[RMDB]
RNA sequence: GGGAACGACUCGAGUAGAGUCGAAAAUUUUCGCCCAGUUGAACAGUCGAAGACCGUGGAAGCCGUAAUGGCACGAAGCGAUCGAAUGGCUGGAUAACGUAAGAGAGGUCAACCCAGAGCCCGUGAAGCGUACAGACAGUUUCGACUGUCUGUACGCAAAAGAAACAACAACAACAAC
Reactivity to DMS in 0.01 (KOAc 150mM, MgCl2 10mM, bicine 150mM(pH8.5), 24C), signal-to-noise 2, nucleotides 027 to 126: u000u000u000u000c010g010c010c000c070a170g040u000u000g010a020a050c000a000g000u000c000g000a190a220g000a010c030c000g100u000g020g000a250a050g000c000c010g000u020a220a100u050g000g020c020a050c180g000a300a200g020c000g000a060u000c000g000a070a180u010g000g000c010u000g000g000a040u020a080a050c040g030u030a080a070g020a060g000a080g040g000u000c040a130a040c000c000c000a200g030a070g010c010c010c000g000u020g040a030a070
Reactivity to 2A3 in 0.01 (KOAc 150mM, MgCl2 10mM, bicine 150mM(pH8.5), 24C), signal-to-noise 2, nucleotides 027 to 126: u100u100u000u060c040g000c000c080c030a000g020u000u050g060a110a010c000a010g000u000c010g020a050a000g000a020c030c010g060u010g000g020a110a000g070c000c000g050u300a190a120u300g000g040c040a010c190g000a010a010g030c020g000a040u000c010g020a050a030u090g000g000c000u000g000g000a030u080a150a010c030g000u160a190a000g060a020g000a010g070g000u000c000a020a020c080c000c020a020g000a000g090c000c000c000g030u010g100a020a020